Chemical mapping of a 170-nucleotide RNA with 2A3 and DMS.
For DMS the reverse transcriptase was MarathonRT.
2A3 adducts were read by reverse transcription with SuperScript II with manganese.
Source: RMDB library 15KLIB, as collected in RNAgym.
The RNA was probed in 150 mM KOAc, 10 mM MgCl2 and 150 mM bicine (pH 8.5) at 24 C.

RNA sequence: GGGAACGACUCGAGUAGAGUCGAAAAGGGCCCCUCGCUCGUAUCUCCGAGAGGAGACGAGAAGGAGGCGGAUCUCCCUUUGCCAUCCGAGGGGACUGCGUCCUCCUUACGGAUGCCCAGGUCGGACUACCCGUCCCGUUCGCGGGACGGAAAAGAAACAACAACAACAAC
Reactivity to 2A3 in 0.01 (KOAc 150mM, MgCl2 10mM, bicine 150mM(pH8.5), 24C), signal-to-noise 6, nucleotides 027 to 129: g010g000g010c020c010c000c000u010c020g030c010u000c010g030u090a170u050c010u000c010c010g050a030g000a030g070g000a000g000a000c000g000a000g010a010a080g220g010a020g000g040c140g010g030a070u050c110u110c050c000c010u030u030u020g030c000c010a010u000c000c000g010a040g010g000g000g010a000c040u160g090c170g020u020c000c030u120c000c000u080u080a060c010g000g000a020u040g000c000c000c000a020g010g040u070c050g040g000a040c020u100a110c050
Reactivity to DMS in 0.01 (KOAc 150mM, MgCl2 10mM, bicine 150mM(pH8.5), 24C), signal-to-noise 4, nucleotides 027 to 129: g050g020g030c050c020c010c020u000c070g050c000u000c000g040u000a100u030c010u030c000c030g020a230g040a220g040g020a060g010a030c000g010a000g010a010a020g000g000a030g010g040c000g020g040a150u030c170u050c000c000c060u050u020u010g000c240c020a030u030c000c000g040a020g040g020g000g010a030c030u110g040c220g020u020c030c000u030c000c100u060u000a080c040g020g010a030u030g030c000c010c050a030g030g020u040c060g010g050a120c080u060a180c170